An RNA of 207 nucleotides, treated with DMS and 2A3 and read out base by base. The reactions ran in a buffer of 150 mM KOAc, 10 mM MgCl2 and 150 mM bicine (pH 8.5), at 24 C. For DMS, 4,349 sequencing reads were counted. It was measured as part of the RMDB library OK3TST. Reactivities are given for positions 27 through 156. The 2A3 profile rests on 2,479 reads.
RNA sequence: GGGAACGACUCGAGUAGAGUCGAAAAAGCAAGGUUUGUGCGAGUACAUUGCUGCUACAACUUGGAGCCGCAAGCUAGUCGUACAGACCGCGACUAAUCAUCAUAUGUCGGCCACAAGUGCCGCCAUAUUGGCAGCCUGGCAUGGUGAUAAGCUGGGUCAUAACUGCAUCUUCGGAUGCAGUUAUGAAAAAGAAACAACAACAACAAC
Reactivity to DMS in 0.01 (KOAc 150mM, MgCl2 10mM, bicine 150mM(pH8.5), 24C), signal-to-noise 2, nucleotides 027 to 156: a090g010c030a090a080g010g000u000u000u000g000u010g010c010g010a070g010u000a120c080a150u000u000g010c010u000g010c000u000a050c060a070a160c130u000u000g030g000a110g030c000c030g040c000a010a050g000c180u000a040g010u000c000g020u000a060c000a040g020a060c000c000g000c030g000a050c020u000a120a050u020c030a070u000c030a090u010a110u000g010u000c050g020g000c010c050a260c120a060a120g030u000g020c000c000g040c010c000a050u000a040u000u000g020g020c060a070g030c010c010u010g000g010c020a070u000g050g020u000g010a080u000a050a070g010c000u010g020g010g010
Reactivity to 2A3 in 0.01 (KOAc 150mM, MgCl2 10mM, bicine 150mM(pH8.5), 24C), signal-to-noise 4, nucleotides 027 to 156: a000g050c060a050a080g000g000u020u000u010g000u000g000c000g000a000g080u040a010c090a210u020u010g010c000u000g000c000u050a070c030a250a110c110u230u240g070g000a020g010c020c020g000c010a020a010g040c040u040a000g210u000c010g000u000a000c010a010g010a000c000c000g010c000g000a010c060u110a190a070u080c030a030u010c000a000u000a000u030g010u000c000g000g000c010c010a240c050a230a170g020u110g220c000c000g000c000c000a020u040a040u030u050g040g000c010a010g040c000c000u000g000g010c030a070u100g080g090u150g070a070u060a190a010g000c020u040g060g000g000